[RMDB]
RNA sequence: GGGAACGACUCGAGUAGAGUCGAAAAAGGUGUAUGAAGUUUCAUAUUUGAUUUUUUCAGCAGAACGAUAGAGACUUCAUUUAACUUAGGUUGAUCUAGGCCAGAGACAGACCUACGUCAAGAUAAUCCCACCUUUGAAACACUUUGGUAAUGCUCCGAUAUCUCUUAAGUUCGCUUAAGAGAUAUCAAAAGAAACAACAACAACAAC
Reactivity to DMS in 0.01 (KOAc 150mM, MgCl2 10mM, bicine 150mM(pH8.5), 24C), signal-to-noise 3, nucleotides 027 to 156: a020g010g000u010g020u000a030u000g020a060a030g000u000u000u000c030a130u000a050u000u000u000g040a060u020u010u000u010u000u010c130a210g040c180a160g010a050a110c070g010a060u000a080g010a050g000a030c000u000u010c010a040u000u010u000a040a040c050u000u000a060g030g000u000u000g010a070u000c140u000a060g020g000c040c020a140g020a270g000a140c100a170g000a010c020c000u000a000c110g000u000c010a010a060g000a090u000a070a080u010c020c060c020a080c070c050u010u000u010g000a210a060a090c050a070c100u000u000u000g020g010u010a040a180u010g000c010u020c040c180
Reactivity to 2A3 in 0.01 (KOAc 150mM, MgCl2 10mM, bicine 150mM(pH8.5), 24C), signal-to-noise 3, nucleotides 027 to 156: a000g000g000u010g010u030a010u010g010a000a000g010u020u000u010c090a090u090a100u100u170u160g120a190u050u070u020u030u070u210c070a070g040c030a030g010a100a000c030g010a020u030a010g010a000g000a010c000u000u000c000a010u060u080u030a030a010c010u010u040a020g050g000u020u020g030a080u010c010u050a040g100g000c020c030a020g020a010g010a120c020a030g060a020c010c000u020a020c040g040u020c020a020a050g020a160u080a140a060u090c020c000c000a010c020c000u000u050u090g080a070a080a020c080a030c020u100u100u090g030g010u080a130a060u130g020c030u050c050c030